[RMDB]
RNA sequence: GGGAACGACUCGAGUAGAGUCGAAAAGCCAAGAGAACUGAAGCACAGAGAGGUUCAGAAUUGCCCAGAGUCACAUGGCUAGUGAGUGACAGAGGUAGGAUUCAAAACCAAACUGUUCUUGUUCCAUUGUCCACUGUCUUUAUAAACACUAGGCUAAGCAUAAAUAAAAUUUCGAUUUUAUUUAUGCAAAAGAAACAACAACAACAAC
Reactivity to 2A3 in 0.01 (KOAc 150mM, MgCl2 10mM, bicine 150mM(pH8.5), 24C), signal-to-noise 6, nucleotides 027 to 156: g030c000c010a040a020g080a000g000a060a010c060u180g060a080a010g020c040a020c020a010g030a010g010a020g060g000u020u020c050a010g030a020a040u050u060g030c000c020c010a050g030a040g130u030c010a010c010a060u120g190g010c020u050a060g100u030g200a070g000u010g010a010c010a020g130a050g050g020u090a050g060g130a020u000u050c020a060a070a020a050c010c010a020a070a060c030u010g000u030u020c010u030u020g000u000u010c010c020a070u060u140g040u030c020c010a050c080u050g020u040c010u060u240u060a210u140a120a140a020c040a020c090u080a040g060g050c040u090a040a030
Reactivity to DMS in 0.01 (KOAc 150mM, MgCl2 10mM, bicine 150mM(pH8.5), 24C), signal-to-noise 2, nucleotides 027 to 156: g040c090c030a080a170g000a180g020a090a070c040u010g030a060a040g020c100a090c030a100g020a090g020a300g010g000u000u000c040a290g010a040a090u010u000g020c010c010c010a190g010a180g020u000c040a070c040a090u000g040g010c060u000a090g010u030g020a170g010u000g000a070c030a110g000a070g010g040u000a070g030g020a070u020u000c010a060a070a070a100c030c010a030a160a240c040u000g010u000u000c050u000u000g020u000u000c040c020a200u000u000g000u000c000c010a050c040u010g010u020c040u000u010u020a090u000a090a040a070c020a030c040u010a080g000g000c020u000a100a190